[RMDB]
RNA sequence: GGGAACGACUCGAGUAGAGUCGAAAAGGGGUCAACGAUGUAGAUCCAACUCAGGCUUGGAUUUAUGGAGCUGAAGCCUCCACGGCUCCAUUGUCAGCCUGAGCUGGAUCGCAGAUAUCGUUGACGGAGGCACCCAAAACGAUCCUUCGGGAUCGAAGUUUAAUCUCUACUUCGGUAGAGAUUAAACAAAAGAAACAACAACAACAAC
Reactivity to DMS in 0.01 (KOAc 150mM, MgCl2 10mM, bicine 150mM(pH8.5), 24C), signal-to-noise 2, nucleotides 027 to 156: g030g000g050g050u000c000a000a020c010g000a070u050g000u000a090g010a010u000c000c000a010a020c010u010c000a030g010g010c000u010u010g040g010a040u000u000u000a020u000g000g010a070g000c000u000g010a090a180g000c040c010u000c010c020a300c030g010g040c000u000c030c010a030u000u000g000u000c040a090g000c000c000u000g010a020g030c030u000g020g010a030u000c000g010c110a120g010a070u000a030u010c010g010u000u000g010a030c020g020g000a050g090g020c030a120c000c000c000a100a070a120a190c000g000a020u010c010c000u000u000c300g030g030g010a010u000c010g010a020a090
Reactivity to 2A3 in 0.01 (KOAc 150mM, MgCl2 10mM, bicine 150mM(pH8.5), 24C), signal-to-noise 6, nucleotides 027 to 156: g060g010g040g000u000c020a000a000c000g000a000u000g020u030a040g000a000u000c000c000a010a010c000u000c000a000g010g010c020u250u300g140g010a070u150u200u140a010u060g000g000a000g000c000u020g020a070a010g020c000c000u010c000c000a020c000g010g000c000u000c000c000a000u010u030g040u050c120a040g000c010c000u000g010a000g000c000u000g000g000a000u000c000g000c010a000g000a010u030a000u020c010g000u000u000g010a000c000g000g000a000g000g000c010a040c010c010c000a050a080a020a060c010g000a000u010c010c000u080u120c270g070g010g000a000u000c000g010a040a000
Chemical mapping of a 207-nucleotide RNA with DMS and 2A3. Reactivities are given for positions 27 through 156. The DMS profile rests on 4,878 reads. DMS adducts were read by reverse transcription with MarathonRT.